Structure probing data (2A3) for a 207-nucleotide construct. Conditions: 150 mM KOAc, 10 mM MgCl2 and 150 mM bicine (pH 8.5), 24 C. It was measured as part of the RMDB library M2RFPK.
[RMDB]
RNA sequence: GGGAACGACUCGAGUAGAGUCGAAAAGAAAGAAAGAAAGAAGCCGGCUCUGCUAGUUUCACGGCAACCACGUUGAAAUUACAACGAGAGAAGCUCGCACUCAACUUCAACGGCUUAACGAGUGCAAAAAAGAAGUAUCACUUCGGUGAUACUUCAAGAUGUUUCUAGUCUUCGGACUAGAAACAUCAAAAGAAACAACAACAACAAC
Reactivity to 2A3 in 0.01 (KOAc 150mM, MgCl2 10mM, bicine 150mM(pH8.5), 24C), signal-to-noise 1, nucleotides 027 to 156: g050a030a060a010g090a050a130a000g020a040a230a000g050a070a000g060c030c000g060g000c020u000c020u050g000c020u000a000g010u000u030u040c030a020c000g000g000c070a030a040c050c080a100c030g000u040u110g030a050a060a080u140u080a090c040a060a060c090g010a010g000a000g000a090a000g050c110u100c140g000c010a000c000u020c000a070a070c000u010u010c010a100a120c040g020g000c010u030u020a020a020c100g000a000g020u050g000c040a000a000a160a000a000a000g010a000a000g000u010a000u000c000a000c000u000u060c140g050g000u000g000a000u000a000c000u000u000c000a000a000